[RMDB]
RNA sequence: GGGAACGACUCGAGUAGAGUCGAAAACUCGAAAGAGACCUGCAUAUCUUAGGCAGAUGAACAAGUCUCGUCUGAAAAGCGAAAGCCCUAAGAUAUGCAGCUGUGAGGACUUGCCGCAGAAAAUAAAAGUCCUGACUAUAUUCGUAUAGUCAGGACUAAAAGAAACAACAACAACAAC
Reactivity to DMS in 0.01 (KOAc 150mM, MgCl2 10mM, bicine 150mM(pH8.5), 24C), signal-to-noise 3, nucleotides 027 to 126: c000u000c000g000a100a090a080g000a020g000a190c280c000u010g000c020a020u000a000u020c000u000u000a010g000g000c030a010g010a010u000g000a010a130c020a010a070g000u000c030u010c000g010u020c000u000g000a080a090a100a130g000c040g000a120a050a150g000c000c000c000u000a000a020g000a010u000a020u000g010c000a010g010c000u010g010u010g020a140g000g000a000c010u000u000g010c300c030g020c050a030g000a150a050a060a120u080a080a090a110
Reactivity to 2A3 in 0.01 (KOAc 150mM, MgCl2 10mM, bicine 150mM(pH8.5), 24C), signal-to-noise 4, nucleotides 027 to 126: c000u010c010g020a030a040a010g070a000g040a130c000c000u000g000c000a000u000a000u000c000u000u010a000g000g000c000a000g000a010u010g000a030a010c020a050a000g070u040c030u010c040g040u000c000u020g100a210a150a070a050g020c010g060a110a010a000g010c010c000c000u000a000a000g000a000u000a000u000g000c000a000g000c000u010g010u010g010a050g000g010a010c000u010u030g040c020c000g000c020a020g100a040a100a030a020u210a030a100a040
Description:
The record gives the reactivity of an RNA of 177 nucleotides to DMS and 2A3. It was measured as part of the RMDB library OK1LIB. 2A3 adducts were read by reverse transcription with SuperScript II with manganese. DMS adducts were read by reverse transcription with MarathonRT. The reactions ran in a buffer of 150 mM KOAc, 10 mM MgCl2 and 150 mM bicine (pH 8.5), at 24 C. For 2A3, 5,628 sequencing reads were counted.